[RMDB]
RNA sequence: GGGAACGACUCGAGUAGAGUCGAAAACAGGCAGUGAGGUCACUCAAGGAGACAAUCGAAGACUGUUGGGACCAGGAUGCAGAGGCUCGGCUUACUGCACAGUGUGCUGAGGAAAGGAUGGCUGAACUUAUGAUGAUUUGGGAAAGAAACAAAUCUAGAUAAUCAGCUGGUUCGCCAGCUGAUUAUCAAAAGAAACAACAACAACAAC
Reactivity to 2A3 in 0.01 (KOAc 150mM, MgCl2 10mM, bicine 150mM(pH8.5), 24C), signal-to-noise 2, nucleotides 027 to 156: c050a000g080g000c000a000g000u000g040a020g010g000u020c020a010c030u100c020a010a060g030g020a030g050a100c060a050a060u050c040g070a050a030g010a040c090u030g030u070u050g000g000g070a000c000c010a010g010g010a010u040g030c020a030g010a030g040g070c020u020c090g050g000c040u130u040a110c050u040g030c050a020c010a110g090u070g010u040g040c030u020g000a000g010g000a140a050a000g010g000a050u030g030g020c020u020g030a030a030c000u060u090a030u220g040a100u020g010a000u020u090u020g050g000g030a150a050a100g040a040a080a000c010a020a010a040u300c020u300a020
This 207-nucleotide RNA was probed chemically with 2A3. Source: RMDB library OK3TST, as collected in RNAgym. High 2A3 reactivity points to a flexible backbone, as in loops and unpaired stretches.